[RMDB]
RNA sequence: GGGAACGACUCGAGUAGAGUCGAAAAAGAGGUGAGGAGGGAUCCCCGAGACGCUGGAGGAGCACCGGGAAAAAGAAAAGAAGGCAAGGAAUUGGUAGAAAAGAGCGAGCCUCCCGAUACGAGUUUGCAAAGUAAUAUGGUUCGCCAUAUUACUUUGAAAAGAAACAACAACAACAAC
Reactivity to DMS in 0.01 (KOAc 150mM, MgCl2 10mM, bicine 150mM(pH8.5), 24C), signal-to-noise 3, nucleotides 027 to 126: a170g010a060g000g000u010g000a110g010g000a080g000g020g010a160u000c040c010c010c040g010a100g010a080c160g020c080u000g020g010a110g010g000a110g010c030a040c060c030g000g000g000a040a050a090a050a080g000a050a070a080a090g020a080a080g010g000c060a040a060g010g000a050a090u010u010g010g020u010a090g010a060a040a100a080g000a070g010c060g000a060g020c020c030u000c010c020c020g010a110u010a060c130g000a110g000u000u010u010g000
Reactivity to 2A3 in 0.01 (KOAc 150mM, MgCl2 10mM, bicine 150mM(pH8.5), 24C), signal-to-noise 2, nucleotides 027 to 126: a030g050a030g030g060u080g030a040g060g010a050g010g050g000a040u050c010c000c000c020g020a050g020a030c040g000c070u040g000g070a070g010g020a020g010c010a020c030c000g000g010g000a010a120a020a020a030g060a010a100a000a000g020a030a030g040g000c020a000a020g030g000a080a110u080u080g090g020u110a040g100a050a100a020a020g040a020g030c020g000a030g010c000c000u010c000c010c000g000a010u040a050c040g010a050g090u040u080u040g080